[RMDB]
RNA sequence: GGGAACGACUCGAGUAGAGUCGAAAAGAUAUGGAUCGCAACAGCCAUGAACACCUUGGACCUCGGAAACGAGCUAGGUGAAUGGACAUGCGAUCCUAAGUCAAAGAACUAUGUUCGCAUAGUUCAAGUCGUAGAUCUUGUUCGCAAGAUCUACGACAAAAGAAACAACAACAACAAC
Reactivity to DMS in 0.01 (KOAc 150mM, MgCl2 10mM, bicine 150mM(pH8.5), 24C), signal-to-noise 2, nucleotides 027 to 126: g000a030u000a160u000g000g000a030u030c000g010c000a020a020c270a230g000c000c000a250u020g000a130a040c010a020c000c000u000u000g030g000a170c300c000u000c000g020g000a040a030a130c040g070a000g010c010u000a010g020g010u010g030a040a030u000g000g010a050c120a170u000g000c000g000a000u000c000c000u000a000a050g000u000c020a120a130a090g000a010a000c000u000a000u000g010u000u020c240g020c000a000u000a010g000u000u000c000a080a150
Reactivity to 2A3 in 0.01 (KOAc 150mM, MgCl2 10mM, bicine 150mM(pH8.5), 24C), signal-to-noise 2, nucleotides 027 to 126: g030a000u050a030u080g000g000a000u010c000g000c020a030a090c040a270g060c000c000a090u280g220a130a030c010a020c020c020u020u070g180g040a230c060c030u000c010g020g000a010a050a010c000g020a000g030c000u010a010g000g000u030g030a080a200u290g000g000a020c010a040u030g010c000g000a000u010c000c000u000a010a000g040u030c040a010a110a210g000a000a000c000u000a010u000g040u000u130c300g020c120a000u000a010g000u000u020c030a000a020